[RMDB]
RNA sequence: GGGAACGACUCGAGUAGAGUCGAAAAAAUUCUGCCUGGCGUUGCCGUGGCUCCUCGUUCGGAUCGGCUUUCCGCUGCCUUCCGCUGGAUGACGACGGGUUAUCCGGCGGUCGACGCACGGUCAUGCUUCAACGGGCUAAUUCGUUAGCCCGUUGAAAAAAGAAACAACAACAACAAC
Reactivity to 2A3 in 0.01 (KOAc 150mM, MgCl2 10mM, bicine 150mM(pH8.5), 24C), signal-to-noise 2, nucleotides 027 to 126: a000a000u130u000c010u030g040c010c020u020g010g010c080g140u080u160g010c020c000g050u040g020g010c000u030c000c000u030c010g060u090u050c040g000g090a140u070c020g020g000c000u010u020u030c010c000g030c130u020g000c000c000u000u000c000c000g000c000u010g000g000a000u010g010a000c070g070a100c110g300g060g000u000u000a010u010c000c000g000g000c000g000g010u020c010g060a070c040g000c000a000c010g000g010u010c020a050u210g000c020
Reactivity to DMS in 0.01 (KOAc 150mM, MgCl2 10mM, bicine 150mM(pH8.5), 24C), signal-to-noise 2, nucleotides 027 to 126: a040a080u020u000c070u000g020c010c000u030g050g000c020g000u040u000g020c010c020g010u000g000g020c030u000c020c010u010c090g010u010u000c080g010g000a090u010c140g000g000c000u000u030u030c030c000g030c170u000g000c040c000u000u000c000c000g000c000u000g000g000a010u000g010a000c000g010a290c260g040g030g000u000u000a010u000c000c030g020g000c010g040g000u000c020g000a050c170g020c000a060c050g000g000u020c100a030u020g000c040
Structure probing data (2A3 and DMS) for a 177-nucleotide construct. The DMS profile rests on 3,492 reads. Reactivities are given for positions 27 through 126. It was measured as part of the RMDB library RFM100. For DMS the reverse transcriptase was MarathonRT. Conditions: 150 mM KOAc, 10 mM MgCl2 and 150 mM bicine (pH 8.5), 24 C. High 2A3 reactivity points to a flexible backbone, as in loops and unpaired stretches. Reactivities are rounded to 0.1 and cut off at 0 and 3.